Chemical mapping of a 207-nucleotide RNA with 2A3. 2A3 adducts were read by reverse transcription with SuperScript II with manganese.
RNA sequence: GGGAACGACUCGAGUAGAGUCGAAAAAGCAUUUCCUAUGUGCUGUUAACGCGAUUCAACCUUAAUAGGAUAUGCUAAACACUGCCGUUUGAAGUCUGUUUAGAAGAAACUUAAUCAAACUAGCAUCAUGUUGGUUGUUUAUCACUUUUCAUGAUGCCCUUUUCCACAGGUUCGCCUGUGGAAAAGGAAAAGAAACAACAACAACAAC
Reactivity to 2A3 in 0.01 (KOAc 150mM, MgCl2 10mM, bicine 150mM(pH8.5), 24C), signal-to-noise 1, nucleotides 027 to 156: a000g000c010a010u030u010u010c000c000u010a000u000g000u020g000c030u020g060u250u130a280a130c080g010c110g200a110u160u120c070a130a120c040c020u180u300a060a010u000a020g000g010a000u010a000u000g000c000u030a000a000a000c010a000c000u000g000c050c060g020u040u000u000g010a000a000g000u000c020u020g000u010u040u000a010g000a060a000g040a000a200a010c070u190u100a060a040u060c000a000a000a020c000u110a030g000c000a000u000c000a010u000g020u000u050g080g000u000u070g080u060u240u160a240u170c130a060c100u190u180u120u090c000a020u000g000a010u000g000c040
Background:
The reactions ran in a buffer of 150 mM KOAc, 10 mM MgCl2 and 150 mM bicine (pH 8.5), at 24 C.